[RMDB]
RNA sequence: GGGAACGACUCGAGUAGAGUCGAAAAGAUAUGGAGCGAGAAGACAUGAACGAGGGUCGGAAACGACCCGAGUUCAACAGCUUCCGCUCCUAAGUCAAACCAAGGAGCACUUCGGUGCUCCUUGGAAUCAAUACACGAUGUUCGCAUCGUGUAUUGAAAAAGAAACAACAACAACAAC
Reactivity to 2A3 in 0.01 (KOAc 150mM, MgCl2 10mM, bicine 150mM(pH8.5), 24C), signal-to-noise 2, nucleotides 027 to 126: g000a000u030a000u060g030g000a000g000c030g020a300g000a300a000g020a060c120a300u300g010a000a000c000g000a080g000g000g020u000c010g010g000a080a000a000c000g000a010c020c030c000g020a000g000u010u030c030a020a010c030a000g000c000u000u000c000c000g000c010u000c010c000u020a000a000g010u000c030a060a050a100c000c000a010a000g020g000a010g050c150a010c080u090u110c300g140g000u000g000c020u000c000c000u020u000g000g000a000a000
Reactivity to DMS in 0.01 (KOAc 150mM, MgCl2 10mM, bicine 150mM(pH8.5), 24C), signal-to-noise 4, nucleotides 027 to 126: g010a020u000a230u010g010g010a010g030c010g000a180g010a020a010g020a040c080a300u010g010a010a010c000g010a300g000g010g020u000c010g050g000a030a050a110c000g000a020c000c000c000g000a080g000u000u000c000a040a040c210a180g000c000u000u000c000c010g000c000u010c010c000u010a000a070g010u000c020a140a140a280c010c000a000a000g010g000a020g000c000a020c000u000u020c200g030g010u000g000c010u000c000c000u000u000g000g000a010a040
An RNA of 177 nucleotides, treated with 2A3 and DMS and read out base by base. Conditions: 150 mM KOAc, 10 mM MgCl2 and 150 mM bicine (pH 8.5), 24 C. 2A3 adducts were read by reverse transcription with SuperScript II with manganese. For 2A3, 4,427 sequencing reads were counted. The DMS profile rests on 4,517 reads. Reactivities are rounded to 0.1 and cut off at 0 and 3.